[RMDB]
RNA sequence: GGGAACGACUCGAGUAGAGUCGAAAACGACCUGCAGCCACACGCCGCCAGCGCCGCCCGGAUGGCCUCCGGGAUGACCUCGCGCGCGCGCCGACCGGAACCCCGCCAUUCCGCUGGGUGACCGGGGGGUACCGUCCUUGUUCGCAAGGACGGUACCAAAAGAAACAACAACAACAAC
Reactivity to 2A3 in 0.01 (KOAc 150mM, MgCl2 10mM, bicine 150mM(pH8.5), 24C), signal-to-noise 1, nucleotides 027 to 126: c070g040a040c000c000u000g000c020a020g040c030c040a030c000a000c030g030c030c010g010c010c010a020g000c020g000c010c030g020c000c020c010g030g010a050u120g050g060c010c000u000c000c000g000g000g010a020u070g060a070c000c000u010c010g040c000g000c000g030c000g000c000g000c000c020g050a030c020c010g000g000a000a000c000c000c020c000g000c000c000a150u300u090c110c110g000c060u050g020g020g010u070g020a120c000c010g000g010g000g030
Structure probing data (2A3) for a 177-nucleotide construct. Reactivities are given for positions 27 through 126. Conditions: 150 mM KOAc, 10 mM MgCl2 and 150 mM bicine (pH 8.5), 24 C. The 2A3 profile rests on 913 reads. 2A3 adducts were read by reverse transcription with SuperScript II with manganese.